[RMDB]
RNA sequence: GGGAACGACUCGAGUAGAGUCGAAAAUUCUAGCCACUCGAUCUGCUGAGAGGUGAACGUGACAGGUUGGGCCUUACCCUUGCCUGAUCUCGAUCCUUCCACUGUGGGUGACAUAACCACAGGUCGGCUGGUCUUAAUAGUAGCCAUCUAUCAUGUCGGAGGAUCUCGGGUUCGCCCGAGAUCCUCCAAAAGAAACAACAACAACAAC
Reactivity to 2A3 in 0.01 (KOAc 150mM, MgCl2 10mM, bicine 150mM(pH8.5), 24C), signal-to-noise 1, nucleotides 027 to 156: u050u020c040u080a000g040c000c000a010c000u060c050g060a070u020c010u110g020c030u080g080a050g020a020g090g050u120g080a020a000c010g010u000g020a000c000a000g040g020u000u020g060g020g000c060c040u030u260a090c110c000c000u020u060g000c000c000u060g230a300u030c000u020c000g030a110u000c060c000u000u000c040c000a090c040u000g000u130g020g040g020u090g090a030c040a060u050a000a170c000c000a000c000a000g000g010u010c010g020g000c000u040g010g000u030c000u030u150a220a100u140a040g100u020a040g020c010c060a080u060c070u170a140u110c060a000u000g000u000c000
Chemical mapping of a 207-nucleotide RNA with 2A3. Reactivities are given for positions 27 through 156. The RNA was probed in 150 mM KOAc, 10 mM MgCl2 and 150 mM bicine (pH 8.5) at 24 C.